[RMDB]
RNA sequence: GGGAACGACUCGAGUAGAGUCGAAAAGAUAUGGAGGUUAGACCACCUUGUGAGAGCGAUAAGCUGGGUAUCGGAAACGAUAUUAGCUUUUGACGCUUUAACACAAGGUGGUCUAACCUCCUAAGUCCACAAUAAUAUGGUUCGCCAUAUUAUUGUGAAAAGAAACAACAACAACAAC
Reactivity to DMS in 0.01 (KOAc 150mM, MgCl2 10mM, bicine 150mM(pH8.5), 24C), signal-to-noise 8, nucleotides 027 to 126: g010a110u000a300u000g010g010a020g010g010u000u000a010g010a020c000c000a010c000c000u000u000g010u000g020a140g000a010g010c000g010a160u000a020a020g010c000u000g020g020g020u000a010u000c010g000g010a140a110a270c000g020a010u000a010u000u000a030g000c000u000u000u000u010g020a200c090g010c010u000u000u010a140a130c000a010c010a000a010g000g030u000g000g000u000c000u000a000a000c000c000u000c000c000u000a010a070g000u010c050